[RMDB]
RNA sequence: GGGAACGACUCGAGUAGAGUCGAAAACAACACGUCCUCGUCGUACAGAGUGGUAACAUGUGUCACCACAUAUCCAAGCUUGGGUACACGGGCUUGACCCAACCCCUUGUGCGGAUGGUGGCACAUGAAAAGAAGUAACACUUCGGUGUUACUUCAACUAUGCACUGAAGUUCGCUUCAGUGCAUAGAAAAGAAACAACAACAACAAC
Reactivity to DMS in 0.01 (KOAc 150mM, MgCl2 10mM, bicine 150mM(pH8.5), 24C), signal-to-noise 3, nucleotides 027 to 156: c060a090a110c030a090c050g000u000c010c010u010c040g010u000c060g030u000a160c040a140g020a110g050u010g010g000u010a050a150c020a030u020g030u010g020u000c010a010c020c010a060c090a080u010a070u000c010c000a040a300g000c030u000u020g020g000g060u000a290c110a080c160g000g000g010c010u000u000g000a140c020c010c000a050a120c160c000c020c020u000u000g030u000g000c300g020g000a060u000g000g030u000g010g000c000a020c000a000u000g000a020a020a070a120g000a030a010g020u000a010a000c000a020c000u000u010c210g030g050u000g020u000u000a020c000u000u010c000a030a070
Reactivity to 2A3 in 0.01 (KOAc 150mM, MgCl2 10mM, bicine 150mM(pH8.5), 24C), signal-to-noise 5, nucleotides 027 to 156: c050a000a020c020a020c040g100u080c010c030u040c030g150u040c040g040u160a080c070a100g090a040g050u170g040g080u130a070a020c010a000u000g000u000g000u000c000a000c020c000a090c080a150u290a030u080c000c000a000a010g020c000u010u000g010g000g000u010a010c020a010c040g010g000g000c030u250u300g220a300c000c000c000a000a010c000c010c000c000u010u010g000u030g010c000g000g000a000u010g000g000u000g000g000c000a000c000a000u000g000a000a010a000a010g010a000a000g000u000a000a000c010a000c020u050u080c250g060g010u000g000u010u000a000c000u000u000c000a000a000